The data come from the RNA Mapping Database (RMDB), library TTRINS. The record gives the reactivity of an RNA of 177 nucleotides to DMS and 2A3. For 2A3 the reverse transcriptase was SuperScript II with manganese. The RNA was probed in 150 mM KOAc, 10 mM MgCl2 and 150 mM bicine (pH 8.5) at 24 C.
[RMDB]
RNA sequence: GGGAACGACUCGAGUAGAGUCGAAAAGAUAUGGAGCGGCCGAAGAGUCUAUGGCUCCCAUCGAUCUCGCUCGGAAACGAGCGAGGGAGGGAGUGCAUAGACUCUCUAGACAGCCGCUCCUAAGUCACAAUUCACAUUUGUUCGCAAAUGUGAAUUGAAAAGAAACAACAACAACAAC
Reactivity to DMS in 0.01 (KOAc 150mM, MgCl2 10mM, bicine 150mM(pH8.5), 24C), signal-to-noise 3, nucleotides 027 to 126: g020a060u000a300u000g000g020a040g020c020g030g010c000c040g010a150a010g010a040g000u000c000u000a010u000g010g000c000u000c000c000c010a300u000c270g000a070u010c010u000c000g030c000u020c000g000g000a210a130a230c000g000a010g000c000g010a010g020g000g020a020g030g010g020a040g000u000g060c000a000u000a010g020a020c000u000c000u010c210u000a110g030a240c300a200g000c000c010g010c000u000c000c000u000a020a070g010u000c050a260
Reactivity to 2A3 in 0.01 (KOAc 150mM, MgCl2 10mM, bicine 150mM(pH8.5), 24C), signal-to-noise 1, nucleotides 027 to 126: g000a020u070a050u220g000g000a000g030c000g040g010c050c020g070a100a030g000a020g010u040c010u010a000u010g000g070c010u010c000c000c000a260u300c010g010a000u000c010u000c000g000c010u010c000g020g000a110a120a070c000g020a010g030c010g000a000g000g010g020a010g000g000g020a010g020u220g170c000a000u000a000g000a000c000u010c000u000c020u020a010g010a010c040a030g010c000c000g000c000u020c000c000u020a000a000g000u000c000a010